Source: RMDB library 15KREP, as collected in RNAgym.
The record gives the reactivity of an RNA of 177 nucleotides to 2A3 and DMS.
RNA sequence: GGGAACGACUCGAGUAGAGUCGAAAAGCACAACUUUGCAGGGCAAGCCUAUUGGUAUGUUCUUCCCUUAUGACAUCGAACUUGUCACAGGAAAGCAAAAUAUUCUCCUGCGCAAGUAUGGCCGUGGGUCUUCAUUCAUGUUCGCAUGAAUGAAGACAAAAGAAACAACAACAACAAC
Reactivity to 2A3 in 0.01 (KOAc 150mM, MgCl2 10mM, bicine 150mM(pH8.5), 24C), signal-to-noise 3, nucleotides 027 to 126: g040c020a000c030a140a090c060u100u100u120g000c030a020g000g030g000c030a040a040g020c020c010u140a230u130u230g030g000u040a060u070g030u010u040c000u010u030c000c000c000u000u100a160u070g040a020c010a040u060c070g030a020a060c030u030u050g060u090c020a000c010a050g040g000a060a010a010g050c080a050a060a090a090u160a110u060u080c070u010c010c000u010g000c020g000c020a000a030g010u020a070u060g040g050c010c020g030u080g060g080
Reactivity to DMS in 0.01 (KOAc 150mM, MgCl2 10mM, bicine 150mM(pH8.5), 24C), signal-to-noise 3, nucleotides 027 to 126: g000c040a120c130a090a060c090u000u000u010g020c040a090g010g010g010c120a050a300g010c030c030u000a090u000u010g030g010u000a070u000g010u010u010c080u010u000c000c000c010u010u010a120u020g000a070c030a030u000c090g010a120a050c080u010u000g000u000c010a050c110a020g020g000a030a020a100g010c250a070a050a040a140u010a090u000u000c130u020c000c000u010g010c060g030c120a010a010g000u010a050u000g020g020c040c050g020u000g000g000